[RMDB]
RNA sequence: GGGAACGACUCGAGUAGAGUCGAAAACUCACUCACUACGGUGAGUGAGAAUGUUUAAGCCUCAAUAAAGCUUGGCUUGAGUGCCUCAAGCAGAUAUAGACUGAAACAUUUAGUAUGGCCAAGCAGGGAGCAACGGCUCGAGUACGCUCGAGCCGAACCUCAUCGUAUCAUUCGUGAUACGAUGAGGAAAAGAAACAACAACAACAAC
Reactivity to 2A3 in 0.01 (KOAc 150mM, MgCl2 10mM, bicine 150mM(pH8.5), 24C), signal-to-noise 1, nucleotides 027 to 156: c000u000c000a000c000u030c000a000c000u090a100c300g050g000u000g000a000g000u000g000a000g020a000a090u050g030u000u090u030a020a000g040c000c000u070c050a110a140u130a140a110a000g000c000u000u000g000g000c000u040u110g020a100g160u050g100c000c040u200c170a100a000g040c030a030g100a020u110a040u110a170g100a060c010u080g050a080a060a060c000a000u090u080u090a090g070u040a030u120g000g030c000c000a000a000g020c000a060g000g060g000a200g000c080a110a110c020g000g000c000u000c000g010a000g010u010a010c300g000c100u000c000g000a000g000c000c000g000a000a010

This 207-nucleotide RNA was probed chemically with 2A3.
The reactions ran in a buffer of 150 mM KOAc, 10 mM MgCl2 and 150 mM bicine (pH 8.5), at 24 C.
Source: RMDB library OK3TST, as collected in RNAgym.
For 2A3 the reverse transcriptase was SuperScript II with manganese.
Values cover nucleotides 27 to 156.